[RMDB]
RNA sequence: GGGAACGACUCGAGUAGAGUCGAAAAGAUAUGGACCGCUAGCGAGGUAAACCAAUCUCGGAAACGAGGAGUUUACUACCCACCGCUAAACGGUCCUAAGUCAAAUCAGAAUCUUCGGAUUCUGAAAGUUAUGACGCUAGUUCGCUAGCGUCAUAACAAAAGAAACAACAACAACAAC
Reactivity to DMS in 0.01 (KOAc 150mM, MgCl2 10mM, bicine 150mM(pH8.5), 24C), signal-to-noise 2, nucleotides 027 to 126: g010a050u000a260u030g000g020a000c010c000g010c100u000a010g000c010g000a100g000g020u000a000a000a010c000c070a100a110u010c020u020c000g030g010a060a070a100c000g010a010g000g000a120g010u000u000u000a020c010u010a060c070c030c080a300c170c020g010c000u000a020a060a060c010g010g000u000c000c000u000a000a100g000u000c010a090a140a150u010c000a010g000a000a010u000c000u010u000c250g020g010a010u000u000c000u000g000a000a010a060
Reactivity to 2A3 in 0.01 (KOAc 150mM, MgCl2 10mM, bicine 150mM(pH8.5), 24C), signal-to-noise 2, nucleotides 027 to 126: g000a000u050a030u140g020g000a010c000c020g020c040u000a000g010c000g050a110g190g040u020a020a010a010c040c020a090a060u160c000u000c010g000g080a020a030a020c010g000a010g040g000a110g030u000u030u030a010c010u070a080c030c060c070a100c040c000g000c020u000a100a070a020c010g000g000u000c000c000u020a070a000g010u000c020a040a010a150u010c000a000g010a000a000u010c000u000u080c300g250g000a020u030u000c000u010g010a030a000a010